[RMDB]
RNA sequence: GGGAACGACUCGAGUAGAGUCGAAAAGAAAGUAGCGAAGGUAGACAGCAUCAGGGUCUACCAACCUGAUGCAAAAGGUGUUCACCAUGUACGAACACCAAGUACGUGGAAAAGCUACGAAAAGAAAGGGAUAUCGAUUGUUCGCAAUCGAUAUCCCAAAAGAAACAACAACAACAAC
Reactivity to 2A3 in 0.01 (KOAc 150mM, MgCl2 10mM, bicine 150mM(pH8.5), 24C), signal-to-noise 1, nucleotides 027 to 126: g060a050a060a000g000u040a000g000c000g070a120a000g080g080u100a050g000a010c030a000g000c000a000u000c030a040g000g000g030u170c300u150a040c000c000a000a000c000c000u000g000a020u010g000c000a020a020a020a020g110g000u080g020u070u060c020a170c000c050a000u100g020u000a060c000g070a160a040c110a070c290c000a000a000g000u070a000c010g000u020g000g060a140a000a000a040g000c000u000a050c000g050a000a040a000a000g060a060a030a060
Reactivity to DMS in 0.01 (KOAc 150mM, MgCl2 10mM, bicine 150mM(pH8.5), 24C), signal-to-noise 1, nucleotides 027 to 126: g000a030a110a130g040u000a000g000c030g120a300a000g010g000u000a030g000a170c090a160g050c000a000u010c060a000g000g070g080u000c200u010a140c150c180a030a000c000c000u000g000a000u000g000c000a000a000a280a200g000g040u000g030u000u000c000a240c050c130a070u100g000u000a020c000g100a080a040c240a060c080c140a000a010g040u000a070c200g000u000g000g000a080a050a060a180g000c000u000a000c000g000a060a040a000a010g000a130a070a080